This 177-nucleotide RNA was probed chemically with DMS and 2A3. For 2A3 the reverse transcriptase was SuperScript II with manganese. The 2A3 profile rests on 9,106 reads. It was measured as part of the RMDB library OK1LIB.

RNA sequence: GGGAACGACUCGAGUAGAGUCGAAAAGUUCGCCCUCGCCGGGUGGCCGCGUCGGUGCGGACCCCGAUCGCCUGUCUAGCGGCGGUGGUCGUGAUAGCCGGCUGCACGACCGUCGUCGACGGGCGGGUCCUGCUAUACCAUUCGUGGUAUAGCAGGAAAAAGAAACAACAACAACAAC
Reactivity to DMS in 0.01 (KOAc 150mM, MgCl2 10mM, bicine 150mM(pH8.5), 24C), signal-to-noise 3, nucleotides 027 to 126: g030u000u010c040g020c020c010c010u000c050g020c160c060g020g000g020u010g010g010c000c020g030c000g010u030c190g020g020u020g030c000g000g000a050c050c010c000c000g020a050u030c130g000c010c000u010g000u000c030u010a160g010c010g020g010c000g020g020u000g030g000u000c010g000u000g000a050u010a100g000c020c030g000g010c020u010g000c000a000c000g010a010c010c000g020u000c000g020u010c020g000a020c010g000g000g010c010g030g000g000
Reactivity to 2A3 in 0.01 (KOAc 150mM, MgCl2 10mM, bicine 150mM(pH8.5), 24C), signal-to-noise 6, nucleotides 027 to 126: g030u030u040c020g050c010c010c010u030c030g100c070c020g050g000g040u150g110g070c040c010g010c000g050u190c130g050g110u290g030c010g010g030a060c020c000c000c000g040a130u100c040g000c000c000u020g010u030c030u060a060g100c010g020g000c000g000g010u010g000g000u000c000g000u000g030a070u070a050g040c050c030g060g000c030u040g010c000a010c000g000a000c010c000g020u020c000g000u000c000g010a050c000g000g000g000c000g000g010g000